[RMDB]
Source information
Chemical mapping of a 177-nucleotide RNA with DMS and 2A3. Conditions: 150 mM KOAc, 10 mM MgCl2 and 150 mM bicine (pH 8.5), 24 C. For 2A3, 1,191 sequencing reads were counted. 2A3 adducts were read by reverse transcription with SuperScript II with manganese.

RNA sequence: GGGAACGACUCGAGUAGAGUCGAAAAGAUAUGGACAGUGAAAGAACGAUGAGUACGUGUCGGAAACGACACAGUACGAGUUCGAGUCCUAAGUCAAAACAAUUAAGGAGUUCGCUCCUUAAUUGAACCAACGCUGUUACUUCGGUAACAGCGUUGGAAAAGAAACAACAACAACAAC
Reactivity to DMS in 0.01 (KOAc 150mM, MgCl2 10mM, bicine 150mM(pH8.5), 24C), signal-to-noise 2, nucleotides 027 to 126: g000a000u000a110u020g010g000a000c010a140g000u010g040a130a160a220g000a060a020c030g030a170u000g030a250g000u000a000c020g000u000g010u000c000g020g000a020a040a070c020g000a020c000a010c000a060g010u000a000c000g020a080g000u000u000c000g000a250g010u000c000c000u010a030a150g000u000c030a080a090a120a170c000a000a010u000u010a040a000g030g000a030g030u000u020c300g000c020u010c000c000u000u000a000a030u000u010g000a020a130
Reactivity to 2A3 in 0.01 (KOAc 150mM, MgCl2 10mM, bicine 150mM(pH8.5), 24C), signal-to-noise 1, nucleotides 027 to 126: g030a010u010a020u090g010g010a010c040a070g230u290g300a280a180a280g050a130a000c090g200a300u300g070a000g080u010a010c010g010u000g000u030c000g010g010a000a030a040c000g020a000c010a020c030a000g000u000a000c010g080a010g000u000u020c010g010a010g000u000c010c000u000a070a090g060u080c030a000a000a080a120c000a000a030u000u000a000a000g000g020a020g000u080u170c200g090c120u030c010c060u000u000a030a000u000u020g010a000a010